[RMDB]
RNA sequence: GGGAACGACUCGAGUAGAGUCGAAAAAUCGAUUAAUAUGUCAAAUAAACCACCUACUGUUGUUAUGAUGGUUGGUUUACAAGGUGCUGGUAAAACAACAACUGCAGGUAAAUUAGCAUUAUUGAUGCCACUAGUACUAGUUCGCUAGUACUAGUGGAAAAGAAACAACAACAACAAC
Reactivity to 2A3 in 0.01 (KOAc 150mM, MgCl2 10mM, bicine 150mM(pH8.5), 24C), signal-to-noise 3, nucleotides 027 to 126: a000u040c030g010a010u090u150a090a100u100a090u220g040u040c010a050a010a080u080a030a030a010c000c000a010c020c020u030a050c040u090g030u110u040g060u100u170a060u140g080a030u050g070g000u080u060g000g000u030u030u020a060c040a010a050g050g000u040g010c010u040g020g050u050a070a160a020a030c030a000a010c000a020a060c060u070g040c070a050g030g070u040a020a050a120u050u070a040g000c010a000u010u080a100u080u150g050a040u090g030
Reactivity to DMS in 0.01 (KOAc 150mM, MgCl2 10mM, bicine 150mM(pH8.5), 24C), signal-to-noise 3, nucleotides 027 to 126: a070u010c060g020a050u000u000a060a050u000a040u010g000u000c060a070a100a110u010a040a050a060c070c030a050c020c010u000a120c070u000g010u000u010g020u000u000a100u020g010a060u000g000g010u010u010g010g000u000u010u000a050c060a080a080g010g000u010g000c030u000g010g020u000a050a060a080a080c030a040a030c050a030a040c060u010g010c090a090g000g000u000a020a040a040u000u000a120g000c020a020u000u000a070u010u000g000a060u000g010
Structure probing data (2A3 and DMS) for a 177-nucleotide construct. The RNA was probed in 150 mM KOAc, 10 mM MgCl2 and 150 mM bicine (pH 8.5) at 24 C.